[RMDB]
Source: RMDB libraries RFM100 and RFMREP, as collected in RNAgym. Chemical mapping of a 177-nucleotide RNA with 2A3 and DMS. The reactions ran in a buffer of 150 mM KOAc, 10 mM MgCl2 and 150 mM bicine (pH 8.5), at 24 C. 2A3 adducts were read by reverse transcription with SuperScript II with manganese.
RNA sequence: GGGAACGACUCGAGUAGAGUCGAAAAGCGACUGUAUAAUUUCUAUUGAGGUUAACGUUUAUAUGUAGUGAUAGUAGUUAAAGUUCUCCCAAGGAAGACUACUCGGGUACACUUUGCUAUGAGCAAAGUAACGUGUUACAUUCGUGUAACACGUUACAAAAGAAACAACAACAACAAC
Reactivity to 2A3 in 0.01 (KOAc 150mM, MgCl2 10mM, bicine 150mM(pH8.5), 24C), signal-to-noise 9, nucleotides 027 to 126: g140c020g020a020c020u050g120u180a130u060a240a150u040u080u020c050u070a300u070u100g040a100g080g000u040u050a030a010c030g040u020u180u040a160u020a060u130g200u090a110g060u040g220a080u060a100g110u030a010g020u050u180a110a060a030g000u030u000c020u010c030c000c010a010a010g040g000a030a050g020a040c010u010a010c000u010c010g010g000g000u060a050c040a020c060u010u020u020g010c010u050a100u300g080a080g050c020a020a020a000
Reactivity to DMS in 0.01 (KOAc 150mM, MgCl2 10mM, bicine 150mM(pH8.5), 24C), signal-to-noise 9, nucleotides 027 to 126: g010c060g000a020c030u000g010u020a160u020a080a070u010u010u000c010u010a090u010u010g010a120g000g010u000u010a030a040c040g010u010u010u010a070u020a060u030g010u000a070g000u030g000a070u010a050g010u010a050g010u000u010a020a050a100g000u000u010c040u000c000c030c030a070a150g000g000a040a050g010a150c020u000a010c000u010c020g010g000g010u000a080c140a070c040u000u000u000g000c010u010a100u030g010a090g010c020a010a010a020